[RMDB]
RNA sequence: GGGAACGACUCGAGUAGAGUCGAAAAAAGUUGAAGUCAGAUGCUAUGGAUCCUCACAACCCAAGAUAACCCUGUGAACUCCAGAGAGGACAGGGUUACAGGGAGAAAAUAACACAUUGCAAAGAUGUUUACAACAGUAGCCAUUCUGCCCUGGCAAUAGUAGUGCUAAUUUCGAUUAGCACUACUAAAAAGAAACAACAACAACAAC
Reactivity to DMS in 0.01 (KOAc 150mM, MgCl2 10mM, bicine 150mM(pH8.5), 24C), signal-to-noise 2, nucleotides 027 to 156: a040a050g020u000u000g020a090a090g010u000c060a080g010a110u010g020c010u000a100u000g010g000a090u000c040c030u000c020a090c100a120a150c020c020c020a050a090g000a300u000a020a030c020c000c010u000g000u010g030a090a090c020u010c000c080a190g010a160g020a110g020g000a110c050a020g000g020g040u000u000a000c000a180g000g000g010a070g010a060a050a070a090u000a060a060c090a040c010a040u010u010g020c020a060a040a190g020a050u010g000u000u000u000a090c070a040a060c000a050g020u020a080g040c060c030a140u000u000c020u000g020c050c020c030u000g000g000c080a050a120
Reactivity to 2A3 in 0.01 (KOAc 150mM, MgCl2 10mM, bicine 150mM(pH8.5), 24C), signal-to-noise 4, nucleotides 027 to 156: a000a030g060u040u020g030a060a010g030u030c010a010g020a140u050g030c020u030a010u040g020g040a050u050c040c010u050c030a070c050a060a080c000c000c010a060a000g020a090u020a010a010c010c010c000u000g010u010g110a150a120c010u020c080c100a130g170a030g010a010g210g050a000c000a000g000g010g000u000u000a000c000a000g000g060g010a030g090a010a040a010a010u170a050a010c050a000c000a070u010u090g020c040a040a040a070g060a070u040g040u090u100u090a090c060a100a000c010a040g070u120a030g030c000c000a020u200u000c020u060g010c020c010c000u020g010g020c010a010a020
Chemical mapping of a 207-nucleotide RNA with DMS and 2A3. The RNA was probed in 150 mM KOAc, 10 mM MgCl2 and 150 mM bicine (pH 8.5) at 24 C. Source: RMDB library OK3TST, as collected in RNAgym. For DMS, 3,383 sequencing reads were counted.